Conditions: 150 mM KOAc, 10 mM MgCl2 and 150 mM bicine (pH 8.5), 24 C.
Structure probing data (2A3 and DMS) for a 177-nucleotide construct.
For 2A3, 1,051 sequencing reads were counted.

[RMDB]
RNA sequence: GGGAACGACUCGAGUAGAGUCGAAAAAAUAGAUUUUGGUGGCUAUGCUUAUGGGAUAGAUUAAAGUUGCCAUGAUCUGAAGAGAGAGGGCUUUGCAGUGUCCUCCCUCUAUAUGAAAUGGCUGGACCUUGUUCGGUUAGUUCGCUAACCGAACAAGAAAAGAAACAACAACAACAAC
Reactivity to 2A3 in 0.01 (KOAc 150mM, MgCl2 10mM, bicine 150mM(pH8.5), 24C), signal-to-noise 2, nucleotides 027 to 126: a000a000u200a010g030a050u060u040u000u050g030g000u010g000g000c000u010a030u120g020c020u020u080a040u160g140g010g100a050u060a010g080a040u170u280a260a120a010g060u060u070g030c020c000a000u040g030a240u030c010u010g080a040a000g000a000g010a000g000a000g000g000g000c000u140u080u110g150c110a120g030u020g000u140c000c000u000c000c000c000u020c000u000a080u010a010u140g040a070a000a030u030g020g000c000u000g100g040a010c000
Reactivity to DMS in 0.01 (KOAc 150mM, MgCl2 10mM, bicine 150mM(pH8.5), 24C), signal-to-noise 2, nucleotides 027 to 126: a020a030u010a040g000a060u000u010u000u010g010g000u000g010g000c000u000a070u000g020c060u010u000a080u010g000g040g000a070u010a030g020a060u000u020a050a040a050g000u040u020g000c000c040a000u000g020a080u050c000u000g020a230a040g000a010g020a100g000a000g000g010g020c000u000u010u050g030c190a110g020u000g020u000c000c000u010c000c050c000u010c000u000a080u010a060u060g000a040a230a050u070g000g000c080u000g000g000a150c150